[RMDB]
RNA sequence: GGGAACGACUCGAGUAGAGUCGAAAAGGACAACGCUUCGGCGUUGUCCAAACGCUCAACCUCAGAGCGCAAGAGUCGAACGAAUACUGUUCGACAUGAGGAAAAUCUCCCUCUUCGGAGGGAGAAACAAUAGGCUCAGGUUCGCCUGAGCCUAUUGAAAAGAAACAACAACAACAAC
Reactivity to DMS in 0.01 (KOAc 150mM, MgCl2 10mM, bicine 150mM(pH8.5), 24C), signal-to-noise 2, nucleotides 027 to 126: g010g000a010c000a010a000c000g010c000u000u010c210g020g000c000g020u000u030g000u000c000c000a010a040a120c010g010c000u000c010a060a050c000c000u000c000a000g010a000g010c000g040c090a060a040g020a050g010u000c000g000a000a010c000g020a200a140u010a120c160u010g000u000u000c030g010a010c000a010u000g000a020g000g000a140a060a150a090u000c000u000c000c000c000u000c000u000u010c170g010g010a010g020g010g020a000g000a000a030a060
Reactivity to 2A3 in 0.01 (KOAc 150mM, MgCl2 10mM, bicine 150mM(pH8.5), 24C), signal-to-noise 1, nucleotides 027 to 126: g010g000a000c020a000a020c040g020c020u070u160c300g100g000c010g030u030u040g000u000c000c010a000a020a000c000g000c000u010c020a120a060c010c010u020c010a010g010a000g000c020g000c160a190a050g030a000g090u000c000g000a000a000c010g010a080a070u180a300c170u220g000u030u010c000g000a010c000a010u010g000a000g020g000a060a000a000a000u000c000u000c000c020c000u010c010u020u020c110g090g000a000g010g010g010a000g000a020a000a000